[RMDB]
RNA sequence: GGGAACGACUCGAGUAGAGUCGAAAAGAUGCUGUGGUCGGUCGGUCCUUCGCUGCACUGCGCCUCGACGGGGAAGUCGAUCUGAUUGCGGAUAGCGGGAUAAUAAACGCAUCCACCAGCGACUGCGAAUAUCCCUAUACUUCGGUAUAGGGAUAUUAAAAGAAACAACAACAACAAC
Reactivity to DMS in 0.01 (KOAc 150mM, MgCl2 10mM, bicine 150mM(pH8.5), 24C), signal-to-noise 9, nucleotides 027 to 126: g000a070u020g010c020u000g010u010g010g010u000c030g010g010u010c030g000g010u010c060c030u000u010c040g000c030u010g010c080a080c070u000g000c080g010c050c030u000c040g010a120c070g000g000g000g020a100a050g010u010c020g000a100u030c020u010g010a120u030u020g020c090g000g000a030u000a130g020c010g000g000g020a140u040a090a100u040a070a130a150c020g010c010a050u000c010c010a120c080c020a020g000c020g010a040c020u000g010c150g000
Reactivity to 2A3 in 0.01 (KOAc 150mM, MgCl2 10mM, bicine 150mM(pH8.5), 24C), signal-to-noise 9, nucleotides 027 to 126: g080a030u150g020c030u040g040u070g080g040u030c020g010g010u020c020g010g070u090c010c010u030u030c020g010c020u050g020c030a030c090u110g020c030g030c040c020u050c020g070a070c030g010g010g010g050a060a020g030u020c020g020a090u040c030u080g050a140u060u200g050c050g000g020a020u030a070g020c030g010g010g040a040u080a210a050u120a080a210a010c010g000c010a010u000c010c000a020c010c010a010g000c010g030a020c020u050g010c030g040

About this RNA: The data come from the RNA Mapping Database (RMDB), library OK1LIB. Chemical mapping of a 177-nucleotide RNA with DMS and 2A3. DMS adducts were read by reverse transcription with MarathonRT. For 2A3, 22,838 sequencing reads were counted.